[RMDB]
RNA sequence: GGGAACGACUCGAGUAGAGUCGAAAAGAUAUGGAGCAUGGAGGAGUCCCAGGCGUUGAAAUCGGAAACGAUGGAGCCUGUGAGACUUGAAGUGCUCCUAAGUCAAACGGUGUGUUCGCACACCGAAGGAAUCACAAUGGUUCGCCAUUGUGAUUCCAAAAGAAACAACAACAACAAC
Reactivity to 2A3 in 0.01 (KOAc 150mM, MgCl2 10mM, bicine 150mM(pH8.5), 24C), signal-to-noise 1, nucleotides 027 to 126: g070a010u080a050u190g000g000a000g020c000a000u020g010g120a190g130g080a010g040u000c000c030c000a000g030g000c020g270u300u080g000a040a030a010u020c020g030g000a080a090a040c000g000a000u020g050g010a000g000c010c000u000g040u210g030a300g000a000c010u000u040g000a000a010g020u010g010c010u000c000c010u000a010a000g040u000c000a000a020a150c030g000g000u030g010u010g010u040u100c250g010c170a000c000a010c000c000g000a040a060
Reactivity to DMS in 0.01 (KOAc 150mM, MgCl2 10mM, bicine 150mM(pH8.5), 24C), signal-to-noise 2, nucleotides 027 to 126: g000a050u000a300u000g010g010a000g020c010a010u010g020g000a300g040g020a010g010u010c010c010c010a020g000g020c000g010u000u020g040a090a130a020u000c010g000g010a140a090a180c000g000a030u000g000g000a080g020c000c020u000g000u010g020a150g010a020c020u010u000g000a250a180g010u000g000c000u000c000c000u000a010a050g020u000c030a070a090a250c000g010g010u000g010u000g000u020u000c220g010c050a040c000a030c000c010g000a040a080